[RMDB]
RNA sequence: GGGAACGACUCGAGUAGAGUCGAAAAACUGUCGGCCAACGAGAGCCCCAGGACGGUGUCCUCUGGCUCGCACAGCAACAGGCUGAGCUCGCCGCUGGUCUACAGGAUCUCGGGAUGCUCUAACGAACUAAUGAACCGGGUUCGCCCGGUUCAUUAGAAAAGAAACAACAACAACAAC
Reactivity to 2A3 in 0.01 (KOAc 150mM, MgCl2 10mM, bicine 150mM(pH8.5), 24C), signal-to-noise 1, nucleotides 027 to 126: a000c010u000g010u000c040g060g000c030c020a050a010c040g030a010g010a010g080c000c010c010c000a030g000g050a000c130g160g300u190g010u080c000c000u000c040u040g010g030c020u000c020g020c010a040c020a020g060c000a030a190c030a150g170g080c020u020g000a010g050c030u080c080g200c070c000g020c070u010g000g000u000c010u050a070c030a000g010g160a050u000c000u000c000g050g040g000a060u190g020c040u030c000u050a060a040c040g050a060a040
Reactivity to DMS in 0.01 (KOAc 150mM, MgCl2 10mM, bicine 150mM(pH8.5), 24C), signal-to-noise 2, nucleotides 027 to 126: a130c020u000g000u000c060g030g020c010c020a060a060c100g000a210g010a010g000c010c010c030c080a020g020g000a040c010g000g010u020g000u000c010c010u010c060u000g010g010c000u010c030g000c070a090c140a040g020c030a180a140c170a090g000g000c050u000g000a040g040c020u010c200g000c150c020g020c100u000g020g000u000c000u000a040c130a060g000g010a050u000c030u010c040g000g000g020a090u010g000c110u010c070u020a080a120c130g010a080a160

An RNA of 177 nucleotides, treated with 2A3 and DMS and read out base by base.
The RNA was probed in 150 mM KOAc, 10 mM MgCl2 and 150 mM bicine (pH 8.5) at 24 C.
The 2A3 profile rests on 1,082 reads.
For 2A3 the reverse transcriptase was SuperScript II with manganese.